[RMDB]
Structure probing data (2A3 and DMS) for a 207-nucleotide construct. DMS adducts were read by reverse transcription with MarathonRT. The RNA was probed in 150 mM KOAc, 10 mM MgCl2 and 150 mM bicine (pH 8.5) at 24 C. It was measured as part of the RMDB library OK3TST. 2A3 adducts were read by reverse transcription with SuperScript II with manganese.
RNA sequence: GGGAACGACUCGAGUAGAGUCGAAAAGAUUAAGUGGGAGCGUCGCCCUGUCGGUGCAUCGGAUAUUAAUUAGCCAGUGCGUGGCAGUACGCAUAUUGAUGUCUACUUUGGCGUAGACUAUGCCAAUUUAAGGAUUGUUGGGCAAUCCAGCCCUAGACCAUGCACUAAUAUUCGUAUUAGUGCAUGGAAAAGAAACAACAACAACAAC
Reactivity to 2A3 in 0.01 (KOAc 150mM, MgCl2 10mM, bicine 150mM(pH8.5), 24C), signal-to-noise 6, nucleotides 027 to 156: g080a020u150u150a080a040g040u110g010g020g010a040g030c020g030u060c030g050c030c020c000u020g050u050c030g050g030u080g020c010a040u060c040g020g010a010u010a040u160u180a190a070u110u070a050g030c020c030a020g020u010g030c030g040u060g030g000c030a020g040u070a020c020g000c040a030u010a080u090u150g090a100u080g010u010c010u010a020c030u080u110u190g130g000c050g010u020a010g030a030c010u040a060u070g030c000c020a050a050u030u110u130a120a040g060g010a100u010u060g100u060u060g040g010g000c010a020a050u070c020c010a010g010c010c010c000u010a020g010a020
Reactivity to DMS in 0.01 (KOAc 150mM, MgCl2 10mM, bicine 150mM(pH8.5), 24C), signal-to-noise 3, nucleotides 027 to 156: g000a150u000u000a060a080g020u000g010g000g010a060g020c040g020u010c040g020c030c030c010u000g020u000c020g020g030u010g030c040a050u000c050g020g030a040u020a070u010u000a080a180u010u000a060g000c030c030a060g020u000g010c010g010u000g010g000c040a060g010u000a040c040g000c030a090u000a090u000u000g010a100u010g000u000c010u000a040c020u000u010u000g030g020c090g050u000a050g010a080c050u010a050u010g000c050c020a000a090u000u000u000a080a110g020g010a110u010u000g010u000u000g000g020g030c060a090a130u000c070c080a110g000c020c020c010u000a100g000a230